[RMDB]
RNA sequence: GGGAACGACUCGAGUAGAGUCGAAAACAUUCGUGCCCAAGGAGACGGGGGAGCACCUGGUGCAUGUGAAGAAAAAUGGCCAGCACGUGGCCAGCAGCCCCAUCCCGGUGGUGAUCAGCCAGUCGGAAAUUGGGGAUGCCAGUCGUGUUCGGGUCUCUGAUAUGUUAGAUUUCGAUCUAACAUAUCAAAAAGAAACAACAACAACAAC
Reactivity to 2A3 in 0.01 (KOAc 150mM, MgCl2 10mM, bicine 150mM(pH8.5), 24C), signal-to-noise 8, nucleotides 027 to 156: c030a070u110u120c030g020u030g030c000c000c010a040a060g050g010a030g010a030c060g040g010g000g050g020a010g030c020a010c000c010u020g020g030u090g030c040a070u090g030u060g090a110a180g110a050a120a030a020a050u070g010g000c010c010a030g020c060a020c110g070u040g010g010c010c010a010g010c010a000g020c000c000c000c000a010u050c020c000c010g010g000u000g000g010u080g050a300u190c020a010g000c000c010a030g170u190c010g020g000a070a140a150u090u050g000g000g000g000a010u030g000c000c010a030g020u080c030g000u010g000u020u020c030g080g020g010u000c010u000c020
Reactivity to DMS in 0.01 (KOAc 150mM, MgCl2 10mM, bicine 150mM(pH8.5), 24C), signal-to-noise 4, nucleotides 027 to 156: c050a160u000u000c050g010u010g040c010c010c010a120a110g020g010a100g030a090c030g020g020g020g040g010a140g020c050a100c030c010u000g000g010u010g020c040a070u010g010u000g000a110a130g010a020a070a080a140a110u000g010g020c000c000a070g020c090a030c040g020u000g010g000c020c010a020g010c030a060g000c010c000c000c000a060u010c020c000c000g020g030u000g010g020u000g020a140u000c280a270g020c010c000a040g010u010c010g000g010a000a030a100u000u010g000g030g010g010a030u000g010c000c000a050g000u000c020g030u000g000u000u000c050g020g040g010u000c020u000c070